[RMDB]
RNA sequence: GGGAACGACUCGAGUAGAGUCGAAAAAUAAACCGGAAGCGACGCAGCAAGCCCGACCGGAAGGGCAACCGGAUCCCGGAUCUCAACCCGGUUGGGACGCACCUGAGAGACGGGAAUGCGUAAAAAAACGACUAUGAUAGUUCGCUAUCAUAGUCGUAAAAGAAACAACAACAACAAC
Reactivity to 2A3 in 0.01 (KOAc 150mM, MgCl2 10mM, bicine 150mM(pH8.5), 24C), signal-to-noise 1, nucleotides 027 to 126: a030u110a020a030a000c010c000g020g020a150a040g150c070g020a010c000g020c030a050g000c050a070a010g000c000c000c000g020a050c020c020g040g010a020a050g020g010g000c020a000a000c000c000g020g000a040u040c010c040c000g000g060a080u010c010u000c010a050a100c000c010c000g240g000u080u170g110g040g000a030c020g010c090a080c000c040u030g010a040g000a030g000a070c050g020g010g090a050a060u010g000c030g010u020a000a050a000a000a090a000
Reactivity to DMS in 0.01 (KOAc 150mM, MgCl2 10mM, bicine 150mM(pH8.5), 24C), signal-to-noise 2, nucleotides 027 to 126: a090u010a070a080a080c010c000g020g020a250a110g010c130g020a070c060g000c050a030g030c080a120a120g020c020c000c020g000a150c010c020g000g010a070a090g040g010g000c040a080a110c010c000g000g000a270u000c000c000c000g000g010a130u000c010u000c010a040a130c130c010c010g000g020u020u000g010g000g000a040c060g020c090a090c220c080u010g000a070g000a040g000a130c020g010g000g000a030a030u010g000c000g000u000a000a010a020a040a060a090